This 177-nucleotide RNA was probed chemically with DMS.
RNA sequence: GGGAACGACUCGAGUAGAGUCGAAAAGGAGGUUCAUCUGGCAUUGAUGAGAAGCUUGAUAAAAAUUUAGAAGAAUGUGUGGUAGAAGUUGCUAAGUACUUAAGUAAGUUCAGUAACACUGAAUAUACCGUCAUCUCAUUUUCGAAUGAGAUGACGGAAAAGAAACAACAACAACAAC
Reactivity to DMS in 0.01 (KOAc 150mM, MgCl2 10mM, bicine 150mM(pH8.5), 24C), signal-to-noise 1, nucleotides 027 to 126: g000g000a110g000g020u000u000c060a050u000c070u030g020g030c030a070u010u000g010a070u000g000a190g000a210a060g000c100u010u000g030a060u000a050a060a070a110a050u010u010u010a050g000a100a070g010a090a030u000g050u000g010u020g010g010u000a080g000a090a080g000u000u000g000c010u000a020a070g000u000a050c090u000u030a050a170g030u000a030a140g030u000u000c020a100g000u000a120a080c200a300c050u000g020a070a050u000a100u010a170
The reactions ran in a buffer of 150 mM KOAc, 10 mM MgCl2 and 150 mM bicine (pH 8.5), at 24 C. The DMS profile rests on 550 reads. Reactivities are given for positions 27 through 126. DMS adducts were read by reverse transcription with MarathonRT. The data come from the RNA Mapping Database (RMDB), library OK2TRN.